An RNA of 207 nucleotides, treated with 2A3 and DMS and read out base by base.

RNA sequence: GGGAACGACUCGAGUAGAGUCGAAAAAGAGUUUAGUGCCUGAGCGUCGGGGGACAGGGCAGCAUCCUUAGGUGCAGUGCUUUCAGGAAAUGUGCAUCCAUGGAAGUAGGAAAUGCGUGUUUAUGUUGCCCAACCUAAAACAUCACACUUAAUGGGGUCAACCGCAAUAAUUCGUUAUUGCGGUUGAAAAAGAAACAACAACAACAAC
Reactivity to 2A3 in 0.01 (KOAc 150mM, MgCl2 10mM, bicine 150mM(pH8.5), 24C), signal-to-noise 4, nucleotides 027 to 156: a000g100a010g000u060u070u050a040g000u040g040c050c080u050g030a030g030c090g040u060c040g030g040g000g000g040a050c040a090g010g030g000c010a010g000c000a020u080c000c040u070u100a040g040g060u110g040c010a020g010u010g070c000u010u030u010c020a000g000g050a010a090a080u150g030u060g070c010a010u020c010c020a050u020g010g000a010a020g000u060a040g030g160a070a110a060u080g010c030g010u060g000u050u090u040a030u010g010u010u010g000c000c000c000a010a080c020c010u050a030a030a010a040c030a050u090c040a010c020a030c050u060u110a080a020u110g000g010g000g010
Reactivity to DMS in 0.01 (KOAc 150mM, MgCl2 10mM, bicine 150mM(pH8.5), 24C), signal-to-noise 3, nucleotides 027 to 156: a060g000a150g010u010u000u010a070g030u000g000c010c030u000g000a190g010c080g030u000c030g010g020g000g000g010a220c130a180g000g030g010c020a090g020c020a080u010c070c120u010u000a080g030g000u000g030c030a140g020u010g010c020u000u000u010c040a090g000g010a040a040a120u010g000u010g010c060a300u000c030c000a110u000g010g010a030a030g030u000a070g000g000a080a060a060u000g000c040g000u000g010u000u000u000a080u000g010u000u000g030c000c010c050a090a060c060c010u000a020a030a040a040c040a080u030c050a050c070a060c110u010u000a050a070u000g000g020g020g000

2A3 adducts were read by reverse transcription with SuperScript II with manganese. Source: RMDB library OK3TST, as collected in RNAgym. The reactions ran in a buffer of 150 mM KOAc, 10 mM MgCl2 and 150 mM bicine (pH 8.5), at 24 C.